An RNA of 177 nucleotides, treated with DMS and 2A3 and read out base by base. For DMS, 4,967 sequencing reads were counted. Source: RMDB library VIROID, as collected in RNAgym. Conditions: 150 mM KOAc, 10 mM MgCl2 and 150 mM bicine (pH 8.5), 24 C.
RNA sequence: GGGAACGACUCGAGUAGAGUCGAAAAGGAUGCCCAGGUCGGACCGCGAGGAGGUGGAGAUGCCAUGCCGACCCGAAGAGGAAAGAAGGACGCGAACGCAAACCUGUGAGUGGACAUUCGUUUAUUCGAUACGAAAUAUCUUCGGAUAUUUCGUAUCAAAAGAAACAACAACAACAAC
Reactivity to DMS in 0.01 (KOAc 150mM, MgCl2 10mM, bicine 150mM(pH8.5), 24C), signal-to-noise 5, nucleotides 027 to 126: g020g010a110u010g010c030c010c010a110g010g010u010c030g020g000a150c070c070g010c080g000a090g010g010a090g010g030u000g010g010a100g010a110u000g010c060c030a060u010g010c020c010g000a050c020c010c040g020a080a070g010a110g010g010a060a080a050g010a110a060g000g010a070c100g000c050g000a040a050c060g000c060a060a070a100c050c030u010g020u000g000a090g020u000g000g010a060c080a070u000u010c080g010u000u000u000a100u010u010c280
Reactivity to 2A3 in 0.01 (KOAc 150mM, MgCl2 10mM, bicine 150mM(pH8.5), 24C), signal-to-noise 2, nucleotides 027 to 126: g040g000a060u110g010c020c000c000a020g050g040u060c020g010g040a090c010c010g010c030g040a090g050g030a020g000g090u100g050g060a110g010a040u140g050c020c000a010u110g020c000c020g030a040c000c020c010g010a060a030g060a020g040g040a070a020a030g070a010a040g010g010a010c010g010c040g040a060a010c050g000c070a100a080a050c020c030u070g030u060g080a010g060u110g000g020a020c010a080u070u080c050g020u090u020u080a140u090u120c070